[RMDB]
RNA sequence: GGGAACGACUCGAGUAGAGUCGAAAACAAUAUGCAUGGAUCCCAUGUACAAUUAUCAUGCGUAUUAGUAUGCUCGUGCAUGGGAUUGCUGUGAGGAAACUCACAGUAAUAUGCUAGACGAGCGUAAGGUAGACGUAGUAUUCGUACUACGUCUACCAAAAGAAACAACAACAACAAC
Reactivity to DMS in 0.01 (KOAc 150mM, MgCl2 10mM, bicine 150mM(pH8.5), 24C), signal-to-noise 4, nucleotides 027 to 126: c050a070a030u020a020u000g020c010a000u030g000g010a100u020c010c000c010a070u030g000u020a050c150a090a050u050u040a080u040c000a000u000g000c010g010u040a040u010u010a090g010u000a020u010g000c090u010c080g000u000g000c020a020u010g010g000g010a010u000u010g010c010u000g040u000g000a010g000g000a130a070a180c000u010c000a010c000a000g010u000a010a030u020a080u020g010c060u010a100g020a040c040g000a030g010c020g020u010a070a090
Reactivity to 2A3 in 0.01 (KOAc 150mM, MgCl2 10mM, bicine 150mM(pH8.5), 24C), signal-to-noise 9, nucleotides 027 to 126: c020a010a040u040a030u120g000c000a010u020g010g080a060u080c010c020c010a000u020g020u040a050c070a140a110u170u050a070u260c010a010u020g000c000g020u030a070u070u040a080g120u050a040u110g010c010u020c040g010u020g020c020a010u010g040g000g000a000u000u000g000c000u000g010u000g000a000g010g030a040a060a050c000u000c000a000c000a000g000u000a000a010u060a010u050g060c040u080a040g030a110c020g010a010g050c050g030u060a060a050

The record gives the reactivity of an RNA of 177 nucleotides to DMS and 2A3.
The DMS profile rests on 11,949 reads.
For 2A3, 21,104 sequencing reads were counted.
Values cover nucleotides 27 to 126.